An RNA of 207 nucleotides, treated with 2A3 and DMS and read out base by base. The DMS profile rests on 5,106 reads. 2A3 adducts were read by reverse transcription with SuperScript II with manganese. Source: RMDB library ARCHII, as collected in RNAgym. The reactions ran in a buffer of 150 mM KOAc, 10 mM MgCl2 and 150 mM bicine (pH 8.5), at 24 C.
[RMDB]
RNA sequence: GGGAACGACUCGAGUAGAGUCGAAAAUUGGAUUGCUCGUGUUCAAUGACAGGUCUUAUUAUUAGCGAGAUACGAUUAAGCCUUGUCUAGCGGUUUGAUAAGAGAUUGAUAGACUCGCAGUUUCUAGACUUGAGUUAUGUGUCGAGGGGCUGUUAAACUAGAUAUAUCCCUUCGGGGAUAUAUCUAGAAAAGAAACAACAACAACAAC
Reactivity to 2A3 in 0.01 (KOAc 150mM, MgCl2 10mM, bicine 150mM(pH8.5), 24C), signal-to-noise 4, nucleotides 027 to 156: u030u030g010g020a010u020u120g010c000u000c020g020u020g010u070u040c050a050a040u050g070a090c070a110g050g070u040c040u070u110a200u110u100a110u080u190a120g030c010g000a010g010a030u030a040c030g020a030u010u080a010a010g010c010c010u070u140g000u000c010u000a010g040c030g030g000u040u050u050g030a020u040a050a030g010a020g020a070u060u210g060a020u030a070g030a040c000u000c040g000c020a000g000u050u030u030c020u020a020g010a020c010u030u110g040a020g160u130u160a130u210g090u040g020u020c010g010a030g000g000g010g000c000u010g000u030u040a020a040a020
Reactivity to DMS in 0.01 (KOAc 150mM, MgCl2 10mM, bicine 150mM(pH8.5), 24C), signal-to-noise 2, nucleotides 027 to 156: u000u010g000g030a100u000u000g030c020u000c050g000u010g000u010u010c040a060a100u000g000a120c060a090g020g020u010c010u010u000a070u010u000a110u020u000a100g010c030g020a050g010a130u000a110c040g000a100u000u010a040a110g030c030c020u000u000g000u000c020u000a060g020c140g030g000u000u000u000g010a090u000a040a050g010a160g000a140u000u010g010a090u010a080g000a070c010u010c020g050c020a070g000u000u000u000c050u000a100g010a050c020u000u000g000a140g020u000u010a050u000g010u000g010u010c020g020a070g020g000g000g030c010u000g020u000u000a060a060a130